Annotation:
Chemical mapping of a 177-nucleotide RNA with DMS and 2A3.
[RMDB]
RNA sequence: GGGAACGACUCGAGUAGAGUCGAAAAGCGCCGAAAAUGAUUGGCGAUCAAGCGUUAUACCGAAGCUCUGGACUUUGCCGCAAGGCAGAGUGGUAGAAGAGCGUUGCAUGCGCGUCGAAGGGCGAUGUCAUGCGUGUUACUUCGGUAACACGCAUGAAAAAGAAACAACAACAACAAC
Reactivity to DMS in 0.01 (KOAc 150mM, MgCl2 10mM, bicine 150mM(pH8.5), 24C), signal-to-noise 5, nucleotides 027 to 126: g010c040g010c010c010g030a020a070a120a110u100g000a110u000u010g020g010c020g000a110u020c070a090a130g010c040g000u000u010a190u010a070c070c020g000a030a070g000c050u000c000u000g010g010a020c000u000u010u000g000c010c000g000c300a080a090g010g020c010a010g000a000g010u000g000g030u020a060g020a100a030g010a020g000c020g010u010u020g030c040a050u000g000c020g000c010g010u010c020g010a160a090g010g000g000c020g000a070u000g000
Reactivity to 2A3 in 0.01 (KOAc 150mM, MgCl2 10mM, bicine 150mM(pH8.5), 24C), signal-to-noise 5, nucleotides 027 to 126: g030c000g020c010c010g080a120a060a030a060u280g040a200u050u100g010g030c020g010a010u070c050a060a040g000c000g050u070u090a090u020a110c010c030g040a030a010g010c000u010c000u010g020g040a010c000u020u010u010g000c000c000g040c080a060a040g000g000c000a010g000a000g010u040g050g070u090a050g020a180a020g020a000g030c020g000u020u120g020c000a030u050g020c000g010c000g030u020c010g050a110a050g060g040g000c020g030a070u030g080
The RNA was probed in 150 mM KOAc, 10 mM MgCl2 and 150 mM bicine (pH 8.5) at 24 C. It was measured as part of the RMDB libraries RFM100 and RFMREP.